This 177-nucleotide RNA was probed chemically with 2A3 and DMS.
[RMDB]
RNA sequence: GGGAACGACUCGAGUAGAGUCGAAAAGUUAUGACCGUCCAGAAAAGACAAGAUGAGAAAGUGCAGUAUUGACUGUCUUCAAACGCACCUGUCCUUGCUCAAGUGCUGGGAUUGUGUGCCAACGGCUGUACUCCUAUUGCUUCGGCAAUAGGAGUACAAAAGAAACAACAACAACAAC
Reactivity to 2A3 in 0.01 (KOAc 150mM, MgCl2 10mM, bicine 150mM(pH8.5), 24C), signal-to-noise 5, nucleotides 027 to 126: g100u120u110a130u150g080a130c020c010g000u040c030c030a050g080a040a070a010a000g070a010c070a070a060g060a130u150g030a040g050a150a080a010g130u220g060c010a000g020u090a190u160u170g140a070c010u000g010u020c000u010u020c030a070a040a060c050g000c010a000c000c020u050g000u010c000c000u010u010g000c020u050c110a150a260g110u160g150c000u030g000g000g010a000u010u060g030u000g000u000g040c010c000a030a020c020g020g000c020u000
Reactivity to DMS in 0.01 (KOAc 150mM, MgCl2 10mM, bicine 150mM(pH8.5), 24C), signal-to-noise 1, nucleotides 027 to 126: g020u020u000a040u000g000a030c000c000g020u030c000c070a030g000a150a090a000a110g000a210c190a060a090g010a100u060g000a080g010a040a000a140g030u040g000c110a080g000u000a190u070u000g000a040c180u010g000u030c010u000u010c080a010a050a150c230g000c030a000c000c030u000g000u000c010c000u020u000g000c000u000c260a230a190g000u010g030c000u060g000g000g000a050u000u000g040u010g030u000g000c030c110a000a060c080g010g000c110u000